Conditions: 150 mM KOAc, 10 mM MgCl2 and 150 mM bicine (pH 8.5), 24 C. This 207-nucleotide RNA was probed chemically with 2A3 and DMS. The DMS profile rests on 2,328 reads. Reactivities are rounded to 0.1 and cut off at 0 and 3.
RNA sequence: GGGAACGACUCGAGUAGAGUCGAAAAACAUCACGGUCGGAUGCCCAAUAAUACUGGAACCACUUUGGUGUGUCACCAAGUGCCUCAGCGACAUCCUCCAUUGUCGCAGAGGAGAGUGAUGAAAGCACAAACGGGACGUCCAUCUCUGCACAGGCACUCACAAGUACGAAUUCGUUCGUACUUGUGAAAAAGAAACAACAACAACAAC
Reactivity to 2A3 in 0.01 (KOAc 150mM, MgCl2 10mM, bicine 150mM(pH8.5), 24C), signal-to-noise 5, nucleotides 027 to 156: a000c030a020u050c020a020c050g040g040u060c080g050g030a080u170g050c040c010c010a030a030u260a070a020u070a030c100u040g040g030a040a040c010c000a040c040u080u080u090g030g000u030g020u020g070u060c000a050c140c030a040a020g050u040g030c000c000u010c030a010g010c000g010a000c010a030u120c030c080u100c100c050a110u080u040g000u020c010g000c000a010g000a010g050g010a030g000a010g010u080g020a040u040g070a050a050a030g090c080a040c030a130a170a070c120g020g020g060a030c040g050u030c000c010a080u020c030u000c000u030g000c050a070c050a100g020g050c020a010c110
Reactivity to DMS in 0.01 (KOAc 150mM, MgCl2 10mM, bicine 150mM(pH8.5), 24C), signal-to-noise 1, nucleotides 027 to 156: a100c040a090u010c040a030c060g000g060u010c040g150g000a110u010g010c060c000c010a130a170u000a070a120u010a120c030u010g020g000a230a090c060c000a040c040u020u020u000g060g020u000g000u010g010u000c000a110c020c010a060a080g020u000g000c010c020u000c020a140g060c000g010a030c010a040u000c090c050u000c100c100a150u000u000g010u000c010g010c020a080g000a060g050g000a090g010a070g020u010g020a050u000g010a130a090a080g010c030a040c090a020a090a120c050g030g050g050a080c040g040u000c000c050a090u000c050u000c000u000g000c030a090c050a120g000g000c030a110c090

For 2A3, 3,928 sequencing reads were counted.